[RMDB]
RNA sequence: GGGAACGACUCGAGUAGAGUCGAAAAACGGUGCAUGGGCCGGCCAUCGUUUUGGGCCUUCCCCGCCUUGCCGCCGGGCCACCGACGUUCAGCAUCACCAUCAGCGUCGACGUGUCACAUCGGAGCCCUCAUAACAGUACUUCGGUACUGUUAUGAGAAAAGAAACAACAACAACAAC
Reactivity to DMS in 0.01 (KOAc 150mM, MgCl2 10mM, bicine 150mM(pH8.5), 24C), signal-to-noise 5, nucleotides 027 to 126: a030c020g000g000u000g000c090a090u030g010g010g010c020c030g020g000c120c010a000u010c030g000u000u010u010u000g000g010g000c030c070u000u000c020c010c000c180g000c050c010u010u020g010c050c010g010c010c000g010g000g000c020c020a110c090c010g000a060c060g000u000u000c120a100g010c060a050u020c080a060c060c010a100u030c080a080g000c060g010u000c040g000a100c050g000u010g010u010c070a050c050a070u010c030g010g000a150g000c050c070
Reactivity to 2A3 in 0.01 (KOAc 150mM, MgCl2 10mM, bicine 150mM(pH8.5), 24C), signal-to-noise 9, nucleotides 027 to 126: a000c020g010g000u040g010c090a180u190g040g040g030c010c010g020g000c010c000a060u050c040g020u020u020u050u080g040g020g020c020c010u030u080c020c000c000c000g010c010c000u020u110g050c020c020g000c010c000g010g010g030c010c000a040c020c020g050a050c020g040u060u110c040a040g030c030a090u070c030a060c040c010a050u090c040a020g020c010g040u030c020g020a050c040g040u060g040u050c040a020c010a130u060c030g030g020a020g050c000c020